Chemical mapping of a 177-nucleotide RNA with DMS and 2A3. For 2A3, 1,349 sequencing reads were counted. For 2A3 the reverse transcriptase was SuperScript II with manganese. It was measured as part of the RMDB library M2PK50. The RNA was probed in 150 mM KOAc, 10 mM MgCl2 and 150 mM bicine (pH 8.5) at 24 C. Values cover nucleotides 27 to 126.
RNA sequence: GGGAACGACUCGAGUAGAGUCGAAAACUAGGAUCGUUCGCGAUCCUAGAAAGGCGCGGCACCGUCCGCGGAACAAACGGCAAUACAAGAAAGUCAGCAUAAAAAUCAUCAGCUUCGGCUGAUGAAAUCAUUAACUCCACUUCGGUGGAGUUAAUGAAAAAGAAACAACAACAACAAC
Reactivity to DMS in 0.01 (KOAc 150mM, MgCl2 10mM, bicine 150mM(pH8.5), 24C), signal-to-noise 2, nucleotides 027 to 126: c000u000a000g000g010a010u000c000g000u000u010c200g030c020g020a030u000c000c010u000a000g000a020a100a190g000g040c010g010c010g000g010c000a300c080c030g000u020c010c000g000c010g030g000a010a160c160a020a020a020c010g000g040c130a120a080u000a050c160a060a120g010a060a050a120g010u010c050a080g010c120a060u000a010a050a060a130a140u000c000a000u000c000a000g000c020u000u000c170g040g000c020u010g010a000u000g010a020a030a030
Reactivity to 2A3 in 0.01 (KOAc 150mM, MgCl2 10mM, bicine 150mM(pH8.5), 24C), signal-to-noise 2, nucleotides 027 to 126: c000u000a000g000g000a010u000c010g000u060u010c100g010c000g090a020u000c030c000u000a000g000a000a060a020g090g040c000g020c000g020g000c020a040c070c020g140u130c010c000g000c050g030g010a000a030c040a000a020a000c010g020g090c060a010a020u120a110c080a110a000g100a150a070a030g140u100c020a030g090c070a130u200a190a130a000a010a050u050c000a000u010c000a000g030c000u070u130c210g140g000c000u010g000a000u020g000a000a000a000